[RMDB]
RNA sequence: GGGAACGACUCGAGUAGAGUCGAAAAGGCGUAUCAAGUUUGGAGUCAUCCGGCCGAAGGGUUGAGAUGACCCACAGUCGGGUGAUCCACCAGGAGGGUGGAGGAGAGACCACCUCCAGAGGACCCCGUACACGCAGCUUCGGCUGCGUGAAAAGAAACAACAACAACAAC
Reactivity to 2A3 in 0.01 (KOAc 150mM, MgCl2 10mM, bicine 150mM(pH8.5), 24C), signal-to-noise 4, nucleotides 027 to 129: g050g000c080g070u080a040u110c120a070a010g020u010u110u070g040g000a170g020u000c000a000u010c000c040g000g000c000c010g050a070a130g090g010g000u020u010g080a150g000a280u110g030a020c000c000c000a020c020a000g030u040c010g000g010g060u030g070a240u000c000c020a020c010c000a010g000g030a040g050g070g010u120g000g070a070g130g020a090g010a020g040a030c000c010a010c000c010u000c010c000a000g070a050g030g000a000c000c010c000c000g000u060a020
Reactivity to DMS in 0.01 (KOAc 150mM, MgCl2 10mM, bicine 150mM(pH8.5), 24C), signal-to-noise 4, nucleotides 027 to 129: g020g050c040g110u040a050u060c160a080a100g000u020u050u050g020g020a170g000u020c000a010u000c000c060g010g010c010c060g030a170a070g040g030g000u010u030g040a150g010a030u030g010a010c030c000c000a000c000a050g050u020c030g050g000g040u050g000a060u010c000c000a080c140c080a140g050g030a070g000g050g010u080g030g030a000g030g020a190g020a280g000a080c000c030a000c040c020u010c000c000a170g030a120g050g030a090c030c000c030c000g040u040a080
Source: RMDB library 15KLIB, as collected in RNAgym.
The record gives the reactivity of an RNA of 170 nucleotides to 2A3 and DMS.
The 2A3 profile rests on 5,516 reads.
Values cover nucleotides 27 to 129.
For 2A3 the reverse transcriptase was SuperScript II with manganese.